[RMDB]
RNA sequence: GGGAACGACUCGAGUAGAGUCGAAAAGAAAAGGGGGAAAGGCCGAAACCCCGAAAGGCCGAAAGAAAGAAAGAUGGAAACUACGAAACAUCGAAAGUAGGAAAGAAAGAAAGAAAGAAAGAAAGAAGGGAAUUCAUAAGUUCGCUUAUGAAUUCCCAAAAGAAACAACAACAACAAC
Reactivity to DMS in 0.01 (KOAc 150mM, MgCl2 10mM, bicine 150mM(pH8.5), 24C), signal-to-noise 1, nucleotides 027 to 126: g020a030a040a040a030g060g000g000g000g000a200a160a100g000g030c000c000g000a090a080a080c080c000c010c040g040a010a020a160g000g090c020c000g120a110a090a090g020a130a090a110g000a090a080a000g020a010u000g060g000a070a050a060c010u000a130c180g030a110a110a070c040a020u000c000g000a100a070a070g010u000a060g000g000a030a050a080g070a000a130a040g060a020a050a050g000a000a180a000g000a040a100a070g020a030a080a150g010a140a200
The record gives the reactivity of an RNA of 177 nucleotides to DMS. Source: RMDB library OK1LIB, as collected in RNAgym. DMS adducts were read by reverse transcription with MarathonRT. The RNA was probed in 150 mM KOAc, 10 mM MgCl2 and 150 mM bicine (pH 8.5) at 24 C.